[RMDB]
An RNA of 177 nucleotides, treated with 2A3 and DMS and read out base by base.
The 2A3 profile rests on 3,236 reads.
Conditions: 150 mM KOAc, 10 mM MgCl2 and 150 mM bicine (pH 8.5), 24 C.

RNA sequence: GGGAACGACUCGAGUAGAGUCGAAAAGCAAGCACCUGGCCUACUGGCGCGGGCGUCUGCUGAUCGCGCGCGCCAACGUGCUGCGCUUCUCCGAGGCCCUGGCCUACCACCUGCACGAUGAGCGCUAAGACUAAGCUCAAUUCGUUGAGCUUAGUCUAAAAGAAACAACAACAACAAC
Reactivity to 2A3 in 0.01 (KOAc 150mM, MgCl2 10mM, bicine 150mM(pH8.5), 24C), signal-to-noise 2, nucleotides 027 to 126: g020c020a100a000g000c000a020c030c080u100g100g010c010c010u060a080c080u030g000g020c010g000c000g070g100g020c000g030u030c070u260g240c160u200g040a120u120c050g000c020g010c000g010c000g070c040c000a010a000c010g000u010g000c020u000g020c040g000c040u080u020c020u000c020c040g010a060g030g000c000c030c030u070g050g000c000c010u030a080c020c040a030c010c020u030g010c040a020c080g060a050u080g040a030g010c050g000c070u080a100
Reactivity to DMS in 0.01 (KOAc 150mM, MgCl2 10mM, bicine 150mM(pH8.5), 24C), signal-to-noise 3, nucleotides 027 to 126: g000c040a120a040g000c020a030c010c140u000g020g000c020c010u000a160c190u000g000g010c000g030c020g020g000g030c010g030u000c040u010g020c180u000g000a050u010c020g030c010g000c010g000c020g000c000c000a010a040c120g020u000g000c010u000g020c080g010c040u000u000c070u010c050c070g000a100g010g000c030c030c100u020g010g010c010c020u010a080c050c040a070c030c030u000g010c050a080c070g010a060u000g010a100g010c080g010c080u010a080